[RMDB]
RNA sequence: GGGAACGACUCGAGUAGAGUCGAAAAUGUAGUGAAGAGAUUGUACAACCCAUCACUUUCUAACUUUGCGUUAGCAUUGUGCAGUGGUGUAAUGUGGUUGUACACUUAUAGCAUUGGAGAAGCCUCAAGACACACCCGUUCGCGGGUGUGAAAAGAAACAACAACAACAAC
Reactivity to 2A3 in 0.01 (KOAc 150mM, MgCl2 10mM, bicine 150mM(pH8.5), 24C), signal-to-noise 5, nucleotides 027 to 129: u140g000u040a100g060u050g090a070a030g040a010g000a060u060u040g000u000a000c000a020a000c000c000c010a000u030c000a000c000u140u280u070c020u020a010a000c000u020u000u040g010c000g140u120u150a020g010c000a010u020u000g030u060g020c080a060g030u010g010g000u010g010u060a060a080u060g120u220g010g000u000u000g000u000a000c000a000c010u010u010a020u100a030g010c010a020u010u030g030g030a100g010a100a010g040c000c030u050c040a050a050g080a020
Reactivity to DMS in 0.01 (KOAc 150mM, MgCl2 10mM, bicine 150mM(pH8.5), 24C), signal-to-noise 5, nucleotides 027 to 129: u040g010u000a080g040u030g050a110a110g000a010g000a000u030u020g030u010a020c000a030a040c000c040c000a000u020c010a030c020u010u040u100c030u040a090a030c000u030u000u000g020c010g000u060u060a110g000c010a020u040u000g000u040g020c290a070g040u000g000g000u020g040u030a010a010u030g020u050g000g000u050u000g020u010a000c030a010c030u030u030a000u060a120g030c040a080u020u020g010g030a160g010a120a070g030c030c030u000c030a070a080g020a230
The data come from the RNA Mapping Database (RMDB), library 15KLIB. Chemical mapping of a 170-nucleotide RNA with 2A3 and DMS. The RNA was probed in 150 mM KOAc, 10 mM MgCl2 and 150 mM bicine (pH 8.5) at 24 C. Reactivities are given for positions 27 through 129.